[RMDB]
RNA sequence: GGGAACGACUCGAGUAGAGUCGAAAAGAUGACUUCCAGGACUGUUAUGCAACACUAUGCGAGUUAAUAUAACAUUGACUCAAGGCAAGUGAAGCAUGGUGUUGCACUUGCCUUUGUCAAUGGAAGAGAUAGUUAUCCAGUUCGCUGGAUAGCUAUCAAAAGAAACAACAACAACAAC
Reactivity to 2A3 in 0.01 (KOAc 150mM, MgCl2 10mM, bicine 150mM(pH8.5), 24C), signal-to-noise 9, nucleotides 027 to 126: g110a060u120g020a030c010u040u010c010c000a010g020g040a020c030u040g050u160u080a060u160g050c030a050a000c020a020c070u040a030u080g020c040g020a020g010u010u070a090a030u050a060u030a080a040c030a010u000u010g000a000c000u010c090a010a020g070g000c010a030a040g040u030g100a050a020g030c010a050u110g070g060u170g030u030u040g000c000a000c010u000u040g000c000c000u040u040u060g000u000c000a040a080u010g000g010a010a000g050a010
Reactivity to DMS in 0.01 (KOAc 150mM, MgCl2 10mM, bicine 150mM(pH8.5), 24C), signal-to-noise 8, nucleotides 027 to 126: g000a110u020g000a110c040u010u000c020c010a060g000g010a080c120u010g000u020u010a050u020g000c060a040a030c050a050c070u000a050u010g020c050g000a110g000u000u000a040a050u020a080u010a090a100c080a010u000u000g010a010c010u000c150a030a040g000g010c050a020a040g010u010g010a060a070g010c020a140u020g010g010u010g010u000u000g010c000a000c010u010u000g000c010c080u000u010u010g000u000c000a030a050u000g000g000a040a020g010a150